RNA sequence: GGGAACGACUCGAGUAGAGUCGAAAAGGAAACCGAGUCUUAAUAGGGCGACUUAGUAUCAUGUUGUAGACCCGAAACCAUGUGACCUACCCAUGAGCAGGUUGAAGGUGCGGUAAGACGCACUGGAUGCCCCGUAUACUUUCGAGUAUACGGGGCAAAAAGAAACAACAACAACAAC
Reactivity to DMS in 0.01 (KOAc 150mM, MgCl2 10mM, bicine 150mM(pH8.5), 24C), signal-to-noise 1, nucleotides 027 to 126: g000g000a120a110a100c070c000g000a080g010u010c030u010u000a090a060u010a060g010g000g000c110g000a130c100u000u000a010g050u000a100u020c050a040u020g020u000u000g010u000a040g020a060c000c020c000g000a070a050a080c110c050a050u000g000u000g000a150c050c030u000a090c010c030c060a040u010g000a060g000c060a050g000g000u000u000g000a060a230g010g000u000g000c010g000g000u010a040a150g050a110c000g020c010a000c000u000g020g000a190